Record summary
The data come from the RNA Mapping Database (RMDB), library OK2TRN. The record gives the reactivity of an RNA of 177 nucleotides to 2A3 and DMS. For 2A3 the reverse transcriptase was SuperScript II with manganese. The reactions ran in a buffer of 150 mM KOAc, 10 mM MgCl2 and 150 mM bicine (pH 8.5), at 24 C.

RNA sequence: GGGAACGACUCGAGUAGAGUCGAAAAAUCGCCGCUAUAUACGCCGCAUAGCGGCGAUACGCUAUGCGCGCUAUAUACGCCGCGCGCGCUAUCGCCGCAUAAUAGCGAUAAUAUAUUAUCGCGCGCGGUGGGACAUGGAUUUCGAUCCAUGUCCCACAAAAGAAACAACAACAACAAC
Reactivity to 2A3 in 0.01 (KOAc 150mM, MgCl2 10mM, bicine 150mM(pH8.5), 24C), signal-to-noise 2, nucleotides 027 to 126: a000u070c050g010c030c010g000c050u020a000u000a010u000a130c070g030c020c030g120c080a040u020a040g010c000g010g010c000g000a010u010a020c020g000c030u060a060u150g010c020g010c020g010c020u010a030u010a000u030a260c090g020c020c030g000c010g000c000g000c020g000c010u010a000u000c000g010c040c000g050c090a040u180a140a050u040a120g010c000g020a000u010a070a030u100a000u020a040u150u100a080u140c010g000c000g000c000g000c000g020
Reactivity to DMS in 0.01 (KOAc 150mM, MgCl2 10mM, bicine 150mM(pH8.5), 24C), signal-to-noise 3, nucleotides 027 to 126: a070u000c040g000c040c030g040c170u020a010u000a030u010a040c160g030c020c040g010c060a030u000a030g020c000g010g010c090g000a040u000a020c030g010c010u000a010u000g000c010g000c060g030c080u000a030u010a060u000a080c160g000c070c010g010c030g040c030g000c020g010c280u000a020u000c010g020c020c080g000c130a090u010a060a090u010a150g020c000g020a040u000a020a110u020a170u000a090u020u000a080u000c010g010c000g000c050g020c000g000